[RMDB]
RNA sequence: GGGAACGACUCGAGUAGAGUCGAAAAGGCUGCUGCCGGAGCCGAUACCGGAAUACGAGACCUAAUGUGCGGUCGAAUGCACUGAAGUACGAAAGUACGAAGAGGUCAUACCGAGGACCGAGACUCGAUAUGCUCGUUAGAUGGAGCUUUACAUCAACCCACUAUAUGACUUCGGUCAUAUAGUGGGAAAAGAAACAACAACAACAAC
Reactivity to DMS in 0.01 (KOAc 150mM, MgCl2 10mM, bicine 150mM(pH8.5), 24C), signal-to-noise 2, nucleotides 027 to 156: g060g040c000u000g020c020u000g000c000c030g000g010a080g060c030c050g000a150u000a050c040c000g000g040a160a060u000a050c020g030a180g020a150c040c030u000a060a080u000g010u010g010c000g050g000u010c170g020a120a100u000g020c000a030c030u030g010a150a180g000u000a050c020g020a250a140a150g040u000a010c020g010a130a120g010a100g000g000u000c040a130u000a060c020c030g060a080g030g010a230c050c150g000a240g000a100c010u000c000g000a070u000a030u010g000c010u000c000g000u000u020a080g060a260u000g040g010a130g010c050u000u000u000a120c100a060u000c000a090a300
Reactivity to 2A3 in 0.01 (KOAc 150mM, MgCl2 10mM, bicine 150mM(pH8.5), 24C), signal-to-noise 3, nucleotides 027 to 156: g020g000c030u030g010c000u080g030c080c010g030g000a030g070c040c110g020a030u060a080c010c010g000g010a010a020u110a090c090g050a020g030a070c020c000u080a130a060u160g000u010g000c000g000g020u050c060g040a030a010u140g010c010a000c040u040g030a080a010g010u000a000c010g020a070a050a080g000u000a010c000g010a060a020g110a020g070g020u030c030a000u030a030c000c030g010a010g030g030a020c070c090g060a030g030a080c020u030c030g030a050u030a030u160g010c010u000c010g060u070u110a040g010a080u060g050g010a030g050c000u090u100u090a070c060a020u040c010a020a060

An RNA of 207 nucleotides, treated with DMS and 2A3 and read out base by base. The 2A3 profile rests on 1,552 reads. Values cover nucleotides 27 to 156. Source: RMDB library OK3TST, as collected in RNAgym. The RNA was probed in 150 mM KOAc, 10 mM MgCl2 and 150 mM bicine (pH 8.5) at 24 C.